[RMDB]
RNA sequence: GGGAACGACUCGAGUAGAGUCGAAAAAGUUGCUUAAAGAAGCAGAAACAGACCAGAUAAAUCGUCGCUGAAAAACGCACUUCAAACUGGCUGGUAAUAUAUUUAAAGCAGCCCACCAGCAGGAACGGAUACGUUAUAAAUUCGUUUAUAACGUAUCAAAAGAAACAACAACAACAAC
Reactivity to 2A3 in 0.01 (KOAc 150mM, MgCl2 10mM, bicine 150mM(pH8.5), 24C), signal-to-noise 6, nucleotides 027 to 126: a000g040u030u020g000c000u020u010a050a100a060g080a110a020g040c050a020g150a060a140a010c020a000g100a180c010c000a010g010a060u160a060a060a020u070c060g020u020c090g000c020u030g040a050a010a010a020a020c050g000c000a020c030u060u070c060a100a090a070c010u000g030g000c010u010g000g020u040a110a030u090a020u010a040u050u090u050a070a100a010g000c000a000g000c020c010c010a040c010c000a030g050c030a030g110g050a070a050c050g030
Reactivity to DMS in 0.01 (KOAc 150mM, MgCl2 10mM, bicine 150mM(pH8.5), 24C), signal-to-noise 7, nucleotides 027 to 126: a100g020u010u000g020c020u000u000a050a080a080g000a130a110g010c120a080g010a130a150a100c030a020g010a120c020c010a020g000a070u000a050a100a080u000c130g010u000c120g030c010u010g000a070a070a060a090a080c150g000c050a030c030u000u010c120a060a100a110c020u000g000g000c010u000g000g000u000a050a070u010a050u000a060u010u000u000a050a050a070g000c020a020g010c010c030c030a140c070c030a070g010c120a060g000g000a070a050c190g000